Description:
Conditions: 150 mM KOAc, 10 mM MgCl2 and 150 mM bicine (pH 8.5), 24 C. Chemical mapping of a 177-nucleotide RNA with 2A3 and DMS. For DMS, 2,530 sequencing reads were counted. For DMS the reverse transcriptase was MarathonRT. Reactivities are given for positions 27 through 126.

RNA sequence: GGGAACGACUCGAGUAGAGUCGAAAAGCGCUCGAGGUCGCAGAGCAGGUCGAUGCCGACGCUGCGCUCGGCGGGACAGGCGAAGCGCUGCACGGCGCUGCUCAGGUCCUCGCCCCAGGCGGCCAGAGGAUCAGGGUAGGUUCGCCUACCCUGAUCCAAAAGAAACAACAACAACAAC
Reactivity to 2A3 in 0.01 (KOAc 150mM, MgCl2 10mM, bicine 150mM(pH8.5), 24C), signal-to-noise 2, nucleotides 027 to 126: g050c070g020c050u070c100g040a040g070g060u050c050g000c110a000g000a000g040c040a000g010g030u010c020g090a290u290g120c060c000g040a100c040g020c160u060g000c000g030c020u010c030g090g000c020g020g020g020a060c050a030g000g090c010g130a100a060g030c020g020c030u100g030c090a050c070g030g000c070g050c040u000g000c010u000c020a010g110g030u050c000c010u040c040g010c030c020c000c000a070g050g030c020g030g000c010c000a010g000a000
Reactivity to DMS in 0.01 (KOAc 150mM, MgCl2 10mM, bicine 150mM(pH8.5), 24C), signal-to-noise 3, nucleotides 027 to 126: g040c180g000c010u010c030g000a160g030g000u000c030g040c040a110g010a100g010c010a020g020g010u000c030g000a150u000g010c150c020g010a050c020g000c040u000g020c000g020c050u000c080g010g050c040g010g010g010a070c040a080g000g020c180g000a110a050g030c000g010c000u000g020c140a110c180g000g000c010g000c010u000g010c010u000c040a080g000g020u000c000c010u010c040g020c020c010c000c090a170g000g010c040g010g000c030c040a080g000a150